[RMDB]
This 207-nucleotide RNA was probed chemically with 2A3.
The RNA was probed in 150 mM KOAc, 10 mM MgCl2 and 150 mM bicine (pH 8.5) at 24 C.

RNA sequence: GGGAACGACUCGAGUAGAGUCGAAAAACGAGUCCGUACGCGGACUCGAAGGGCCCCAGAAGACCAAGGGGCCCAAACCUACCACUCAUUAGAUGCAUGGAAAUCACUUGGUGAUACGUCACCUAGAACACGCUUUUAAGCUUCGGCUUAAAAGCAACUACUGCUAUACCUUCGGGUAUAGCAGUAGAAAAGAAACAACAACAACAAC
Reactivity to 2A3 in 0.01 (KOAc 150mM, MgCl2 10mM, bicine 150mM(pH8.5), 24C), signal-to-noise 2, nucleotides 027 to 156: a000c000g000a010g010u010c000c000g010u000a010c230g000c020g070g000a000c000u000c000g000a000a000g020g010g010c000c000c000c000a100g130a300a020g030a140c110c040a090a160g000g000g000g010c000c000c000a010a020a000c000c010u040a020c000c030a050c000u100c030a080u100u180a050g040a080u130g090c140a060u110g070g110a080a070a070u100c050a080c110u010u070g000g000u000g010a010u040a110c260g080u010c010a010c000c000u000a020g050a120a060c120a020c170g000c000u010u000u000u010a010a020g000c000u020u060c220g130g000c000u000u000a000a000a000a000g010c010a000a000